[RMDB]
RNA sequence: GGGAACGACUCGAGUAGAGUCGAAAAGAACAAGAAGGCAAAAGGAAAUAAAGGGUGCAAUGCCCUCAGUUUCUCCAUGGUUCGGAUCCAACUCUCCUAGGACACUUCCACCAUGUCCUCAGACAGAGCCUGUGACAUCAGACCCAGUGAAUGUCCACAUGCCUAUAGGCUUCGGCCUAUAGGCAUGAAAAGAAACAACAACAACAAC
Reactivity to 2A3 in 0.01 (KOAc 150mM, MgCl2 10mM, bicine 150mM(pH8.5), 24C), signal-to-noise 3, nucleotides 027 to 156: g030a030a020c010a050a020g070a030a020g050g000c040a060a110a050a020g050g010a030a060a010u100a100a100a010g020g020g000u050g050c110a030a080u160g000c000c000c000u010c000a020g000u000u030u000c050u000c030c030a040u080g050g000u070u090c060g020g030a040u040c020c010a040a040c020u030c010u040c030c040u020a020g000g000a010c020a030c040u130u120c050c060a100c000c010a010u060g010u020c000c020u030c030a010g020a080c030a010g020a010g020c010c020u080g010u070g020a010c010a020u030c010a020g060a110c000c000c010a010g020u040g060a100a050u050g030u060c000c070a010
Reactivity to DMS in 0.01 (KOAc 150mM, MgCl2 10mM, bicine 150mM(pH8.5), 24C), signal-to-noise 2, nucleotides 027 to 156: g000a090a120c060a050a080g000a090a100g000g010c050a020a060a100a100g010g000a080a000a110u000a090a030a040g010g040g040u010g060c030a130a120u020g010c020c020c000u000c010a110g040u000u010u000c000u010c040c030a110u000g000g010u000u010c030g040g010a110u000c010c040a120a110c040u000c010u010c030c000u010a150g010g000a060c050a050c060u030u010c110c050a100c080c060a140u000g020u000c000c010u010c090a060g010a170c030a100g020a070g030c040c020u020g020u010g030a070c020a080u000c030a090g010a080c020c030c020a050g010u000g000a120a100u000g000u000c000c020a140